[RMDB]
RNA sequence: GGGAACGACUCGAGUAGAGUCGAAAACAUAAUUCGCGCUUGAGCUCUGCUCGCGCAAGUAAGCUCCGUUUUGUAUUGCCUGAUGUGCUUAGCGGGUAUUUAUUCGGGAUAGUAAGUUGAACGUUACAAGUGUCGUACCAACUUAUGAAUCUUAAACGCAGAGAUGAGUGUUCGCACUCAUCUCUGCAAAAGAAACAACAACAACAAC
Reactivity to 2A3 in 0.01 (KOAc 150mM, MgCl2 10mM, bicine 150mM(pH8.5), 24C), signal-to-noise 1, nucleotides 027 to 156: c010a000u300a080a140u270u110c060g000c000g010c010u090u230g010a010g030c090u110c130u280g000c020u090c220g000c020g000c010a000a010g080u080a070a010g000c060u000c190c150g000u070u020u020u040g010u020a030u070u090g020c000c000u000g010a010u020g060u080g000c000u080u010a000g030c000g000g100g000u050a150u060u230u000a230u050u160c040g000g000g000a000u010a010g010u000a000a000g020u010u000g000a130a000c070g000u080u170a040c160a210a170g100u060g030u220c000g000u000a020c020c000a000a000c000u000u000a030u010g010a010a070u000c010u010u120a140a070a040c080
Description:
The record gives the reactivity of an RNA of 207 nucleotides to 2A3. The data come from the RNA Mapping Database (RMDB), library ARCHII. Conditions: 150 mM KOAc, 10 mM MgCl2 and 150 mM bicine (pH 8.5), 24 C. Reactivities are given for positions 27 through 156.